Chemical mapping of a 177-nucleotide RNA with 2A3 and DMS. The reactions ran in a buffer of 150 mM KOAc, 10 mM MgCl2 and 150 mM bicine (pH 8.5), at 24 C. The DMS profile rests on 5,247 reads. It was measured as part of the RMDB library OK2TST. DMS adducts were read by reverse transcription with MarathonRT.
[RMDB]
RNA sequence: GGGAACGACUCGAGUAGAGUCGAAAAAGCCGGCUUUGCAACCUUGGGUCUUCAGACUUACCUCACCGCAGGUCCUAAAGAAUCGCGCGCAUGGACGAUCAAGCAGGGAUCUUUGGCGCCUCAAGCCCACUUCAGUGGGAUUCGUCCCACUGAAGUGAAAAGAAACAACAACAACAAC
Reactivity to 2A3 in 0.01 (KOAc 150mM, MgCl2 10mM, bicine 150mM(pH8.5), 24C), signal-to-noise 4, nucleotides 027 to 126: a000g100c070c030g030g010c050u110u070u110g030c010a050a080c010c010u040u060g040g010g020u060c020u060u050c050a060g030a080c020u040u070a050c020c000u020c030a080c030c040g010c040a020g030g040u010c010c010u140a130a090a030g090a040a070u060c040g010c010g000c010g000c130a060u110g040g040a050c020g020a070u060c050a050a040g050c020a050g080g040g000a020u030c000u020u050u060g030g000c000g020c020c000u040c030a050a060g000c000c030
Reactivity to DMS in 0.01 (KOAc 150mM, MgCl2 10mM, bicine 150mM(pH8.5), 24C), signal-to-noise 5, nucleotides 027 to 126: a150g010c080c030g000g020c040u000u000u000g020c050a120a100c060c030u000u000g010g000g010u000c020u000u000c080a100g000a100c050u010u000a090c040c010u000c090a090c110c080g000c070a060g010g000u010c080c030u010a070a080a120g010a080a060u000c080g000c060g010c050g010c050a070u000g010g000a070c060g010a070u000c080a070a110g020c070a100g000g010g020a060u000c030u000u000u000g000g010c080g010c030c050u010c110a070a110g010c030c050